[RMDB]
RNA sequence: GGGAACGACUCGAGUAGAGUCGAAAAAUGGGGAGAAACUGGUGGAGCAAUACUUAAAAAUUAUGUUAUACAUGAAUUUCCUACAGAAUCUGAGUAUUUUGACAAUAUGAGGUUAUCACAAGACUUUGGAUUUAACCAUGCAAAUGUAGUACUUAGAGUUGGAUGUAUCUUUCGAGAUACAUCCAACAAAAGAAACAACAACAACAAC
Reactivity to DMS in 0.01 (KOAc 150mM, MgCl2 10mM, bicine 150mM(pH8.5), 24C), signal-to-noise 1, nucleotides 027 to 156: a140u010g020g000g050g000a200g000a120a060a030c080u000g020g030u000g030g060a120g050c050a120a140u000a170c040u020u000a050a040a050a070a050u000u020a060u000g000u050u020a150u010a060c030a020u000g040a090a140u020u000u020c030c010u000a110c100a190g010a070a120u010c010u020g000a040g000u000a010u000u000u000u000g020a020c060a000a090u000a100u020g010a080g030g010u000u010a040u000c050a050c100a030a120g030a020c050u000u000u030g080g000a070u000u000u000a040a030c080c030a060u000g050c040a080a040a080u000g020u000a080g020u000a050c060u000u020a090g000a260
Reactivity to 2A3 in 0.01 (KOAc 150mM, MgCl2 10mM, bicine 150mM(pH8.5), 24C), signal-to-noise 2, nucleotides 027 to 156: a000u060g000g000g000g040a020g000a020a090a050c140u060g030g020u050g030g040a020g000c000a020a100u090a140c030u100u140a020a080a090a110a200u180u080a070u130g010u060u090a180u080a180c030a020u050g030a070a090u060u050u090c020c030u050a050c040a100g050a130a040u030c000u050g000a010g010u040a070u000u060u110u110g020a030c000a050a090u180a150u270g040a060g010g010u000u040a030u080c030a020c040a240a050g080a130c100u120u080u050g000g020a000u020u020u120a020a000c000c000a010u040g030c000a020a070a090u130g000u020a020g040u000a010c000u000u050a000g000a000
Chemical mapping of a 207-nucleotide RNA with DMS and 2A3.
It was measured as part of the RMDB library OK3TST.
Values are in units of 0.01, from 0 to 300, in steps of 10.
The DMS profile rests on 1,400 reads.